[RMDB]
RNA sequence: GGGAACGACUCGAGUAGAGUCGAAAAGAUAUGGACUAAGAGGGAGCCUGGAUAAGUUCUUGGAUUUAUGGAUCGGAAACGAUCCAUUGUCAGAACGUAACAGGCGAAGAACUCUUAGUCCUAAGUCGAGCGAAGUAUAGUUCGCUAUACUUCGCUCAAAAGAAACAACAACAACAAC
Reactivity to 2A3 in 0.01 (KOAc 150mM, MgCl2 10mM, bicine 150mM(pH8.5), 24C), signal-to-noise 1, nucleotides 027 to 126: g060a040u150a080u190g010g010a000c000u000a000a000g000a000g040g000g010a010g000c000c000u010g060g010a030u010a050a000g010u020u020c040u120u300g230g020a050u300u300u250a010u090g000g000a000u010c040g000g010a120a100a090c020g000a000u000c000c010a010u000u000g000u000c000a030g000a000a010c000g000u000a010a010c000a000g040g000c010g000a020a000g000a010a000c000u040c000u010u030a000g000u000c000c000u020a010a000g030u020c150
Reactivity to DMS in 0.01 (KOAc 150mM, MgCl2 10mM, bicine 150mM(pH8.5), 24C), signal-to-noise 2, nucleotides 027 to 126: g000a080u000a300u000g000g000a000c000u000a000a000g010a030g010g010g020a120g010c000c000u000g020g030a110u000a100a220g000u000u000c000u000u000g010g010a030u000u000u000a000u010g010g000a060u000c040g000g000a120a110a140c010g000a000u010c010c000a000u000u000g010u000c010a020g000a010a010c000g000u010a170a300c000a020g010g000c010g050a010a020g020a100a220c000u000c000u000u000a010g000u010c000c000u010a010a070g030u000c070
Structure probing data (2A3 and DMS) for a 177-nucleotide construct. The data come from the RNA Mapping Database (RMDB), library TTRINS. 2A3 adducts were read by reverse transcription with SuperScript II with manganese. DMS adducts were read by reverse transcription with MarathonRT. 2A3 is a SHAPE reagent: it acylates the 2'-hydroxyl of flexible nucleotides of all four kinds.